RNA sequence: GGGAACGACUCGAGUAGAGUCGAAAAGCGUGAGUACUGGCUGUUUGUGUCUCCAUCCAUUGCCAAUCAGCUGUCAUUAACCACGCAAGACUGUAACGGAGUGCUAAAUUACCGUGUGAAUACCAUACACUUAUUGAAGGUUCGCCUUCAAUAAGUGAAAAGAAACAACAACAACAAC
Reactivity to DMS in 0.01 (KOAc 150mM, MgCl2 10mM, bicine 150mM(pH8.5), 24C), signal-to-noise 7, nucleotides 027 to 126: g010c020g030u000g010a140g010u010a070c150u010g010g020c020u000g010u000u000u000g020u000g010u010c060u010c300c090a060u010c110c120a090u000u000g010c050c000a040a040u000c030a020g010c010u000g010u010c120a090u010u010a100a100c070c020a010c020g020c010a100a070g010a120c080u010g010u000a120a070c040g000g010a090g020u000g010c120u010a050a090a060u010u000a090c020c020g000u000g000u000g010a110a090u000a090c050c060a090u010a170
Reactivity to 2A3 in 0.01 (KOAc 150mM, MgCl2 10mM, bicine 150mM(pH8.5), 24C), signal-to-noise 8, nucleotides 027 to 126: g000c010g000u020g030a110g030u080a090c090u110g030g000c010u010g030u020u030u030g100u030g040u060c030u000c060c040a190u060c060c020a100u120u130g000c000c000a010a020u020c000a000g000c000u030g030u050c010a040u050u170a040a030c020c000a000c000g000c010a010a010g050a030c070u070g030u140a030a010c010g010g010a040g020u090g090c120u170a110a160a150u100u070a160c000c010g020u030g040u040g100a050a070u100a120c020c010a010u060a130